Chemical mapping of a 207-nucleotide RNA with 2A3.
Reactivities are given for positions 27 through 156.
RNA sequence: GGGAACGACUCGAGUAGAGUCGAAAAUACCGCAGGCCUGCGGUGCGGCAGUGUGGAGACCUGCCGUAAGCCGUGUUGUUUUGACAACCGGGAGAAAGCGUAUGCGGAGGCAGCGCUUUCCGGGUCUAAAAGUAUGGGAUCUUCGGAUCCCAUACAACAUCCACUUCAGGUUCGCCUGAAGUGGAUGAAAAGAAACAACAACAACAAC
Reactivity to 2A3 in 0.01 (KOAc 150mM, MgCl2 10mM, bicine 150mM(pH8.5), 24C), signal-to-noise 2, nucleotides 027 to 156: u120a040c020c000g010c060a020g040g220c000c160u080g010c010g000g040u010g000c010g010g010c000a000g010u050g010u090g290g050a060g060a060c000c000u010g000c000c000g000u010a040a010g060c060c050g060u070g000u030u010g010u000u020u020u040g030a010c030a120a110c030c000g000g010g030a050g150a020a000a010g020c000g000u050a280u210g030c040g000g160a120g280g010c000a000g010c000g010c000u010u010u000c010c000g030g000g020u010c010u030a000a070a080a070g000u000a000u000g000g000g000a000u000c000u010u060c190g010g010a000u010c000c000c030a000u000a000c000a020a000